[RMDB]
RNA sequence: GGGAACGACUCGAGUAGAGUCGAAAACAGGAUAAUCGGUAUUUUAUUGCAAUCAAUCGUUUCAAAAUCAACAGAGAUAAUACUUGAUCAAUUGCAAAUUCCAAAGGAGAUCAGUAGAUAAUCCAGACAUUUUAGGCUGAUUCGUCAGCCUAAAAUGAAAAGAAACAACAACAACAAC
Reactivity to 2A3 in 0.01 (KOAc 150mM, MgCl2 10mM, bicine 150mM(pH8.5), 24C), signal-to-noise 1, nucleotides 027 to 126: c010a050g070g020a040u020a050a060u120c000g040g040u090a130u070u240u060u030a170u030u080g000c010a010a030u020c020a020a060u060c050g010u030u010u050c170a120a160a030a030u010c010a040a080c000a110g140a000g000a140u080a120a000u070a160c010u070u120g010a020u020c030a010a080u030u050g060c000a020a070a090u110u020c030c030a080a080a040g150g030a070g020a060u060c030a010g140u080a010g010a040u030a020a030u090c020c000a020g030a080
Reactivity to DMS in 0.01 (KOAc 150mM, MgCl2 10mM, bicine 150mM(pH8.5), 24C), signal-to-noise 2, nucleotides 027 to 126: c110a120g010g030a050u000a110a090u000c060g030g030u000a030u030u000u000u000a100u030u000g000c000a080a020u010c100a070a050u000c060g020u010u000u000c080a060a090a110a120u010c100a090a090c210a140g000a110g000a080u000a090a130u000a020c070u000u010g000a010u010c060a090a110u000u010g010c030a010a040a070u010u020c030c050a080a070a170g010g010a190g000a030u000c020a080g000u020a050g010a110u020a120a050u010c010c010a150g010a210